[RMDB]
RNA sequence: GGGAACGACUCGAGUAGAGUCGAAAACGAUGUUUAUAUAUUCUGGUGCAGGAGGGCAGAUUUACCAUGCUCAAUGGUCCUCAAACUCACACUGGCUUACACGAGUAUGGCUUAAUGACCCAUUGACAUUACGUAUCCAAUUCGUUGGAUACGUAAUAAAAGAAACAACAACAACAAC
Reactivity to DMS in 0.01 (KOAc 150mM, MgCl2 10mM, bicine 150mM(pH8.5), 24C), signal-to-noise 9, nucleotides 027 to 126: c090g000a100u000g000u000u000u000a070u010a110u000a100u030u000c040u000g010g020u010g020c060a050g010g010a090g010g010g010c040a060g010a110u010u000u000a090c040c030a030u000g000c040u010c050a070a110u000g010g000u000c040c070u000c080a060a070a100c110u000c080a070c100a110c080u000g000g000c050u000u000a070c150a090c160g000a030g010u000a030u000g010g000c090u010u000a040a060u000g000a140c030c010c010a150u010u010g010a090c180
Reactivity to 2A3 in 0.01 (KOAc 150mM, MgCl2 10mM, bicine 150mM(pH8.5), 24C), signal-to-noise 8, nucleotides 027 to 126: c030g070a080u110g070u090u250u010a180u030a030u000a060u140u050c030u050g070g020u080g010c040a030g020g080a050g030g010g000c000a010g010a090u030u030u030a030c010c020a020u020g010c010u010c000a040a080u100g010g030u040c010c010u050c020a110a130a100c060u080c030a050c000a020c080u040g010g020c030u060u090a040c060a020c110g010a010g020u020a020u020g010g020c020u050u080a070a030u120g090a090c000c000c030a060u040u140g040a040c030
Chemical mapping of a 177-nucleotide RNA with DMS and 2A3.
For DMS the reverse transcriptase was MarathonRT.
As a SHAPE reagent, 2A3 marks flexible, mostly unpaired nucleotides at the ribose 2'-OH.
Reactivities are given for positions 27 through 126.